RNA sequence: GGGAACGACUCGAGUAGAGUCGAAAAAAGGUGCCAUGAUAUCGGUUAAGAACUCUUAACUCUGAUGGCUUUCGAGUUAUGUGGUGCAUUGAAGCUCUCCCUUCAAAUGGUCGUACAGUUCCGUGAAACCCAAGUGGUGAUUCGUCACCACUUGGGUAAAAGAAACAACAACAACAAC
Reactivity to DMS in 0.01 (KOAc 150mM, MgCl2 10mM, bicine 150mM(pH8.5), 24C), signal-to-noise 2, nucleotides 027 to 126: a080a080g010g030u010g020c030c020a040u010g000a130u000a060u000c020g000g000u000u000a020a000g000a220a040c300u010c010u000u000a010a030c000u000c040u000g010a040u000g000g010c090u000u000u010c030g020a040g020u000u000a060u000g050u000g000g010u000g010c040a110u000u000g010a070a080g000c060u010c100u000c010c000c010u000u010c070a010a080a040u000g020g030u000c020g000u000a090c060a070g000u000u000c020c000g010u000g000a040a150

Record summary:
The record gives the reactivity of an RNA of 177 nucleotides to DMS. Values cover nucleotides 27 to 126. The reactions ran in a buffer of 150 mM KOAc, 10 mM MgCl2 and 150 mM bicine (pH 8.5), at 24 C. The DMS profile rests on 1,269 reads.